[RMDB]
RNA sequence: GGGAACGACUCGAGUAGAGUCGAAAACCGUAUCGGUUCGCCGAUACGGAAAAGUUAUUGCUGCUAACACACAUCUUAAGCAUGGCGGUGGUAUCGCUGGUGGGACUCCCCAGUUCGCUGGGGAGAAAUAGGUUCUAUCUUUCGAGAUAGAACCUAUAAAAGAAACAACAACAACAAC
Reactivity to 2A3 in 0.01 (KOAc 150mM, MgCl2 10mM, bicine 150mM(pH8.5), 24C), signal-to-noise 1, nucleotides 027 to 126: c010c000g000u000a000u000c000g000g050u030u060c180g030c090c000g000a000u000a000c000g000g020a020a070a010a040g080u090u080a090u090u170g040c050u020g000c010u070a120a000c010a000c000a010c020a180u050c040u120u140a050a030g050c040a060u080g020g000c020g000g010u040g020g060u060a020u090c030g010c040u030g000g060u060g010g010g050a050c000u000c010c000c000c000a010g000u040u080c200g020c070u000g000g000g000g000a000g000a000a010
Reactivity to DMS in 0.01 (KOAc 150mM, MgCl2 10mM, bicine 150mM(pH8.5), 24C), signal-to-noise 4, nucleotides 027 to 126: c000c000g010u000a010u000c000g000g010u000u010c230g030c000c000g000a020u000a000c020g010g000a000a020a060a120g000u000u000a050u000u010g010c050u000g010c040u000a050a080c090a110c100a080c110a050u000c080u010u010a080a110g010c060a050u010g000g010c050g000g010u000g000g010u010a030u000c050g010c050u010g000g020u000g000g000g010a270c010u000c000c000c000c000a010g010u000u010c160g010c010u000g000g000g000g010a010g000a000a030
An RNA of 177 nucleotides, treated with 2A3 and DMS and read out base by base.
DMS adducts were read by reverse transcription with MarathonRT.
As a SHAPE reagent, 2A3 marks flexible, mostly unpaired nucleotides at the ribose 2'-OH.
The 2A3 profile rests on 2,476 reads.
The reactions ran in a buffer of 150 mM KOAc, 10 mM MgCl2 and 150 mM bicine (pH 8.5), at 24 C.
Reactivities are given for positions 27 through 126.